The record gives the reactivity of an RNA of 207 nucleotides to DMS and 2A3. DMS adducts were read by reverse transcription with MarathonRT. For 2A3, 4,590 sequencing reads were counted. The reactions ran in a buffer of 150 mM KOAc, 10 mM MgCl2 and 150 mM bicine (pH 8.5), at 24 C.
RNA sequence: GGGAACGACUCGAGUAGAGUCGAAAAACUGCCAUACGUGGCAGAAACAUGCCUUACCAGGACUAAACAGCGUGUCUAAAAAACAGUCCUUCAUACCUGAUCUGGAGGGUAGAUCAGGAAUACUAAAAAAAUCGGGUGAAGUUCGCUUCACCCGAAACAUAUGUGUAUCGUUCGCGAUACACAUAUGAAAAGAAACAACAACAACAAC
Reactivity to DMS in 0.01 (KOAc 150mM, MgCl2 10mM, bicine 150mM(pH8.5), 24C), signal-to-noise 2, nucleotides 027 to 156: a100c020u000g000c020c000a070u010a090c180g040u000g000g050c010a040g000a040a040a110c090a050u000g020c000c010u000u000a130c050c050a020g070g010a060c040u000a150a050a110c070a070g010c060g060u000g040u000c030u040a010a030a040a110a090a090c080a100g000u000c000c010u000u000c050a110u000a080c010c000u010g000a010u000c000u000g100g020a140g020g000g030u000a050g000a000u020c000a020g020g000a040a040u010a190c070u010a000a010a070a070a060a100a130u000c000g020g040g000u000g000a010a010g000u000u020c300g020c000u000u000c010a030c000c010c000g000a000a010a060
Reactivity to 2A3 in 0.01 (KOAc 150mM, MgCl2 10mM, bicine 150mM(pH8.5), 24C), signal-to-noise 4, nucleotides 027 to 156: a000c000u010g010c000c000a030u040a060c170g090u040g000g000c000a000g010a040a010a000c030a020u050g020c000c010u040u050a080c070c060a020g020g000a020c020u070a050a090a070c050a070g050c050g100u060g080u080c080u140a050a080a020a000a010a030c020a010g020u010c010c020u020u100c040a080u080a160c000c000u000g000a000u020c000u020g060g060a060g060g040g040u050a000g000a010u000c010a000g000g010a000a020u100a060c070u140a040a020a030a000a000a000a160u020c000g000g010g000u000g000a000a010g010u060u140c160g030c090u000u000c000a000c000c000c010g000a000a000a000